[RMDB]
RNA sequence: GGGAACGACUCGAGUAGAGUCGAAAAAUGCUAGCGCUAGCAUCGUAAUCGGCAUGCUAUAUACGGCUAGCUAAUUAAUUAUAAUGCCGUAGCAUAUGCUAGCCGGCUACGUAGCGCAUGCUAUACGAUACGGUUGGAUAUUCGUAUCCAACCGUAUAAAAGAAACAACAACAACAAC
Reactivity to DMS in 0.01 (KOAc 150mM, MgCl2 10mM, bicine 150mM(pH8.5), 24C), signal-to-noise 5, nucleotides 027 to 126: a090u000g000c010u000a300g020c040g020c020u000a040g000c140a110u030c030g010u000a020a040u000c040g010g010c010a250u010g010c010u000a020u000a060u000a040c000g010g000c000u010a150g020c270u000a010a050u000u000a080a140u010u010a070u010a110a120u000g010c020c050g020u010a000g010c160a020u000a020u020g000c000u000a300g000c020c000g010g000c050u000a010c020g010u000a020g000c040g010c020a080u000g000c040u000a110u010a080c190g010
Reactivity to 2A3 in 0.01 (KOAc 150mM, MgCl2 10mM, bicine 150mM(pH8.5), 24C), signal-to-noise 2, nucleotides 027 to 126: a000u140g000c050u090a140g010c010g000c010u020a050g050c050a110u190c000g000u000a000a030u010c020g010g020c030a010u120g000c030u030a020u010a010u000a020c000g000g000c000u010a010g110c020u000a020a000u020u070a020a030u050u030a090u040a040a090u100g030c010c020g000u000a000g040c050a020u030a010u200g010c000u020a080g010c010c000g000g000c000u020a020c010g000u020a000g000c010g020c000a010u030g000c010u090a110u040a120c110g030
Structure probing data (DMS and 2A3) for a 177-nucleotide construct. 2A3 adducts were read by reverse transcription with SuperScript II with manganese. The RNA was probed in 150 mM KOAc, 10 mM MgCl2 and 150 mM bicine (pH 8.5) at 24 C. The data come from the RNA Mapping Database (RMDB), library OK2TRN. The 2A3 profile rests on 3,218 reads.